[RMDB]
The record gives the reactivity of an RNA of 207 nucleotides to DMS and 2A3. Values cover nucleotides 27 to 156. The data come from the RNA Mapping Database (RMDB), library OK3TST. For DMS, 2,878 sequencing reads were counted.
RNA sequence: GGGAACGACUCGAGUAGAGUCGAAAACUCGGGAACGCCGGUCAGGCAUUUAACGACCUGGACGGGGACGUACAAACGCUCGUCACACUGUUCACCGGACCGUUCGGAAUCGCCAGCAUCGCCGUCAUCGAUGCGUUAACCGACAUUAUUCCGUCGGAGCACAUAUGCUAUUCGUAGCAUAUGUGCUAAAAGAAACAACAACAACAAC
Reactivity to DMS in 0.01 (KOAc 150mM, MgCl2 10mM, bicine 150mM(pH8.5), 24C), signal-to-noise 2, nucleotides 027 to 156: c060u000c010g000g010g000a020a070c030g000c090c010g020g020u000c030a030g020g000c020a090u000u000u000a130a220c040g000a040c020c020u000g020g000a060c030g020g010g050g010a050c020g030u030a300c110a060a130a090c130g040c030u000c000g030u000c030a080c010a170c080u000g000u000u000c010a080c060c000g010g010a030c050c000g010u000u000c020g030g000a100a100u000c090g000c010c000a150g010c000a050u000c030g010c040c100g000u000c060a090u010c030g000a050u010g000c020g020u000u010a060a100c040c000g020a040c120a160u010u000a150u000u000c090c050g000u010c040g010g000
Reactivity to 2A3 in 0.01 (KOAc 150mM, MgCl2 10mM, bicine 150mM(pH8.5), 24C), signal-to-noise 5, nucleotides 027 to 156: c010u020c000g020g040g000a050a000c010g010c010c010g020g000u020c020a010g000g070c020a010u150u210u130a170a060c110g100a210c010c000u030g010g000a010c010g000g000g010g080a050c000g020u120a070c080a080a270a030c050g020c050u010c020g040u020c010a050c040a030c120u080g040u180u080c020a040c090c000g030g010a040c080c040g030u050u040c020g020g050a050a050u130c060g030c080c030a000g010c010a000u000c010g000c070c030g150u140c010a060u120c010g010a020u020g030c000g020u040u080a020a050c000c010g040a000c010a040u140u280a140u300u040c070c060g010u010c000g010g000